[RMDB]
RNA sequence: GGGAACGACUCGAGUAGAGUCGAAAACAACUCAAAGUGUAUAAGUCACCACAUCAUAGUUACAGGAUAUGACCAACAUGCUAAUGAAACACAUACUAUCAAAAGUGUCACGCGCCAAGCCAUGCUCGCCAUCCAACCCCUUUCACAACUUACGUCCAUCUGGGGUAAUGUUCGCAUUACCCCAGAUAAAAGAAACAACAACAACAAC
Reactivity to DMS in 0.01 (KOAc 150mM, MgCl2 10mM, bicine 150mM(pH8.5), 24C), signal-to-noise 2, nucleotides 027 to 156: c020a130a070c060u000c010a120a130a200g000u000g020u000a070u000a080a120g010u010c010a090c020c020a090c050a090u000c020a110u000a110g050u000u000a140c050a090g010g040a100u000a070u010g010a060c020c020a080a110c030a080u000g020c050u000a090a070u000g000a120a040a060c080a060c040a130u000a080c050u000a090u000c090a070a060a090a120g020u000g000u000c030a050c080g010c070g000c030c010a070a100g010c020c020a030u000g010c020u000c040g000c000c000a090u030c030c040a070a080c020c020c030c000u010u000u000c030a090c010a060a110c110u000u000a070c150g020u030c060c040
Reactivity to 2A3 in 0.01 (KOAc 150mM, MgCl2 10mM, bicine 150mM(pH8.5), 24C), signal-to-noise 5, nucleotides 027 to 156: c020a020a040c020u050c100a090a080a080g030u050g050u010a060u040a230a090g030u050c020a020c050c000a030c020a110u130c010a040u070a120g040u070u090a110c020a030g000g050a030u020a050u190g060a060c020c040a040a040c030a030u090g040c020u140a160a040u120g040a070a100a000c020a010c010a080u140a100c020u110a100u230c090a030a050a030a060g010u030g000u030c040a030c070g040c000g000c020c010a050a010g020c010c010a010u050g010c020u010c010g020c020c000a030u030c010c010a030a080c030c000c010c030u030u100u060c070a090c040a140a040c050u090u180a050c070g120u090c080c000